RNA sequence: GGGAACGACUCGAGUAGAGUCGAAAAUUCCCCUAUUUCGAUAGGGGAACACCUGCGCGCGGCUCGCAGUUCCGACUUCCUCCUCCUCUGAGUCAAAGGGCGAUAGGCCUCGGUUCGCCGAGGCCAACUUUAGGCGAGUAUUCGUACUCGCCUAAAGAAAAGAAACAACAACAACAAC
Reactivity to DMS in 0.01 (KOAc 150mM, MgCl2 10mM, bicine 150mM(pH8.5), 24C), signal-to-noise 2, nucleotides 027 to 126: u000u000c000c000c000c000u020a000u000u000u000c130g010a030u000a000g000g000g010g000a000a010c150a090c070c010u010g000c080g010c050g020c030g000g010c040u000c030g000c070a100g000u000u000c020c020g010a120c070u000u000c030c020u000c020c010u000c020c020u000c020u010g010a100g000u000c070a070a060a080g000g000g020c070g000a150u000a110g010g010c010c000u000c010g020g000u000u000c200g020c000c010g010a010g010g000c000c010a000a020